Structure probing data (2A3 and DMS) for a 207-nucleotide construct. Values cover nucleotides 27 to 156. The reactions ran in a buffer of 150 mM KOAc, 10 mM MgCl2 and 150 mM bicine (pH 8.5), at 24 C. For DMS the reverse transcriptase was MarathonRT. 2A3 adducts were read by reverse transcription with SuperScript II with manganese.

RNA sequence: GGGAACGACUCGAGUAGAGUCGAAAACAGGCCCCAUGGCACCAUCUAUCUGGCCUCCAAGAUGAGAAAGGAGCAUGGGACAGAGAGCUUCUUUCAGCACCUCCUGCCCCAGCAUUUCCAACUGGAGCUGGCUCAGCGGGAUGAGGAUGAAAAUGUACCAUAUAGGUAGCUUCGGCUACCUAUAUGGAAAAGAAACAACAACAACAAC
Reactivity to 2A3 in 0.01 (KOAc 150mM, MgCl2 10mM, bicine 150mM(pH8.5), 24C), signal-to-noise 4, nucleotides 027 to 156: c030a020g040g070c020c000c020c010a070u060g150g000c040a030c020c000a010u010c010u070a050u030c010u030g050g040c050c030u010c030c000a090a020g030a060u130g020a050g020a060a040a030g030g040a090g050c040a090u070g020g050g020a000c030a020g190a020g020a010g020c010u040u060c000u050u260u110c060a020g030c050a080c030c020u030c000c000u010g000c000c000c020c010a000g000c020a050u080u090u030c020c020a100a100c130u150g020g000a000g010c020u030g040g000c030u030c200a030g010c030g010g000g000a020u050g080a070g050g020a050u100g050a030a040a100a000u270g020u220a070
Reactivity to DMS in 0.01 (KOAc 150mM, MgCl2 10mM, bicine 150mM(pH8.5), 24C), signal-to-noise 2, nucleotides 027 to 156: c040a130g000g000c000c010c000c040a060u000g000g040c080a060c020c020a060u000c020u000a160u010c010u000g000g000c080c030u000c000c020a040a130g030a130u000g000a140g000a020a090a060g020g000a120g000c030a070u000g000g040g020a060c040a030g020a160g000a170g000c040u000u000c050u010u010u010c060a060g000c010a090c050c040u010c020c010u000g010c010c050c010c000a040g010c030a160u030u000u000c040c000a170a170c110u020g020g020a110g020c020u000g010g030c080u000c120a040g000c150g020g000g000a060u000g000a090g010g010a080u010g000a080a040a050a100u000g030u000a200